[RMDB]
RNA sequence: GGGAACGACUCGAGUAGAGUCGAAAAUGCUCACCUAUGGAAGGUGUAGAACAAAUACCACCACUCCAGCUACUCAACGUCGACGGAGCCGGCGUUCCAUUGCGAUUGCUACGCAUAGCACAGGAGGGAUGAAGUGAAAUUUCGAUUUCACUUCAUCAAAAGAAACAACAACAACAAC
Reactivity to 2A3 in 0.01 (KOAc 150mM, MgCl2 10mM, bicine 150mM(pH8.5), 24C), signal-to-noise 9, nucleotides 027 to 126: u100g010c000u010c000a020c000c010u070a130u240g250g100a160a050g000g020u040g060u220a030g030a100a030c050a030a110a030u160a070c010c030a030c020c020a060c020u000c000c000a010g000c010u040a050c020u060c150a040a010c020g030u020c010g030a070c070g080g030a030g020c010c000g010g000c000g010u040u030c050c040a110u060u080g010c010g070a090u040u200g050c050u110a050c020g010c030a030u040a030g010c020a030c040a120g010g040a020g020g070
Reactivity to DMS in 0.01 (KOAc 150mM, MgCl2 10mM, bicine 150mM(pH8.5), 24C), signal-to-noise 9, nucleotides 027 to 126: u040g010c030u000c010a020c010c010u000a230u040g020g020a160a040g000g010u000g010u040a020g000a080a080c170a070a100a110u020a130c050c020a100c080c080a080c020u000c010c010a090g010c010u010a040c150u010c130a050a060c070g000u000c020g000a090c080g000g000a100g010c050c010g000g000c020g010u010u000c120c070a070u030u000g010c020g010a100u010u020g010c100u030a070c050g020c050a050u010a050g000c020a070c170a100g010g000a030g010g010
About this RNA:
The record gives the reactivity of an RNA of 177 nucleotides to 2A3 and DMS. The data come from the RNA Mapping Database (RMDB), library OK1LIB. The 2A3 profile rests on 86,882 reads. Reactivities are rounded to 0.1 and cut off at 0 and 3. DMS adducts were read by reverse transcription with MarathonRT.